[RMDB]
RNA sequence: GGGAACGACUCGAGUAGAGUCGAAAAGUGCAAAGUGUCCUCCUAUUGAAGACAGUCUUUUAUCGCGUAGAUAUAUAAAUAAAGACAACGUAGUUAACUGGGAGAAAAUAGGAAAAACUAGACGACCUCUAGAAUUGCUUUUCGAAGCAAUUCUAGAAAAAGAAACAACAACAACAAC
Reactivity to DMS in 0.01 (KOAc 150mM, MgCl2 10mM, bicine 150mM(pH8.5), 24C), signal-to-noise 1, nucleotides 027 to 126: g030u000g010c070a100a100a080g010u000g000u020c140c070u000c000c030u000a070u000u000g000a230a180g000a090c060a090g020u000c020u000u000u010u000a000u010c000g020c200g000u000a120g000a070u000a010u000a270u000a090a080a100u000a100a010a060g000a070c030a060a300c160g000u000a060g050u000u000a010a060c130u000g000g000g000a120g000a090a090a100a030u020a010g060g000a000a010a100a250a080c000u010a080g000a070c120g010a090c090c010